Conditions: 150 mM KOAc, 10 mM MgCl2 and 150 mM bicine (pH 8.5), 24 C. The record gives the reactivity of an RNA of 177 nucleotides to DMS and 2A3. Values are in units of 0.01, from 0 to 300, in steps of 10.
RNA sequence: GGGAACGACUCGAGUAGAGUCGAAAAAACAAUUUGCUUAAUAGCAUCCUAGUGCCAGCGGAACAACAUCUGGUAACAGAUGCCUCUGGGGCCAAAAGCCAAGGUUUGACAGACCCAUUAGGAUUGGGACAUCCUCAAUUUUCGAAUUGAGGAUGUCAAAAGAAACAACAACAACAAC
Reactivity to DMS in 0.01 (KOAc 150mM, MgCl2 10mM, bicine 150mM(pH8.5), 24C), signal-to-noise 5, nucleotides 027 to 126: a070a060c120a090a060u020u030u020g000c010u000u010a080a100u040a140g010c030a150u000c010c010u010a000g020u000g010c000c000a000g000c070g000g000a080a020c050a100a220c000a010u000c000u000g000g000u060a090a140c000a010g000a010u000g000c000c010u000c010u000g000g010g020g040c000c010a090a060a070a240g010c000c010a090a150g000g000u000u000u010g010a200c290a190g000a040c020c010c000a000u010u000a010g000g000a020u010u010g020g010
Reactivity to 2A3 in 0.01 (KOAc 150mM, MgCl2 10mM, bicine 150mM(pH8.5), 24C), signal-to-noise 8, nucleotides 027 to 126: a000a000c200a070a130u170u130u140g030c020u110u120a100a060u120a180g010c010a010u020c000c000u010a010g000u000g010c000c000a010g000c010g020g010a060a050c030a050a020c000a090u000c000u010g000g000u010a030a020c010a000g010a000u000g010c010c000u000c000u010g020g000g020g020c010c000a040a050a020a000g000c010c010a030a040g040g020u040u070u100g080a070c070a030g020a010c000c000c000a000u000u010a010g000g020a030u010u100g050g040
Description: For DMS the reverse transcriptase was MarathonRT. 2A3 adducts were read by reverse transcription with SuperScript II with manganese.